[RMDB]
RNA sequence: GGGAACGACUCGAGUAGAGUCGAAAACGACAAGAGUGUAAAUGAUAGUAGUUGUGUUACUGACGCACUACCUGCUGGUGGAGUAGCCACCUGUAUAUAACACUGCGUAUACUCACUUUGCUGCUCCCUACCUGGUAAAUUUCGAUUUACCAGGUAGAAAAGAAACAACAACAACAAC
Reactivity to 2A3 in 0.01 (KOAc 150mM, MgCl2 10mM, bicine 150mM(pH8.5), 24C), signal-to-noise 9, nucleotides 027 to 126: c050g110a020c050a090a050g060a060g090u070g060u150a090a140a110u210g100a140u130a100g030u010a010g010u060u140g010u010g030u050u070a130c100u210g060a020c020g000c010a000c010u030a020c010c020u060g020c030u030g010g020u020g020g030a110g080u130a030g120c000c010a010c000c000u010g030u010a110u010a010u020a080a030c040a010c050u080g010c040g030u030a020u030a060c030u040c030a040c030u030u040u080g010c020u010g000c000u020c000c000
Reactivity to DMS in 0.01 (KOAc 150mM, MgCl2 10mM, bicine 150mM(pH8.5), 24C), signal-to-noise 9, nucleotides 027 to 126: c080g010a120c140a090a080g000a030g010u000g000u010a060a070a080u030g000a130u030a090g000u010a030g000u020u010g020u000g010u000u010a090c160u030g000a080c060g010c010a040c030u010a030c050c060u010g000c050u000g000g020u000g000g010a240g010u020a070g010c010c070a030c070c040u000g010u020a030u020a060u020a080a070c050a050c060u010g000c070g010u010a060u010a050c040u000c050a050c090u010u010u010g020c020u000g000c030u000c030c030
This 177-nucleotide RNA was probed chemically with 2A3 and DMS. For DMS, 45,232 sequencing reads were counted. It was measured as part of the RMDB library OK1LIB. DMS adducts were read by reverse transcription with MarathonRT. For 2A3, 69,455 sequencing reads were counted. 2A3 adducts were read by reverse transcription with SuperScript II with manganese.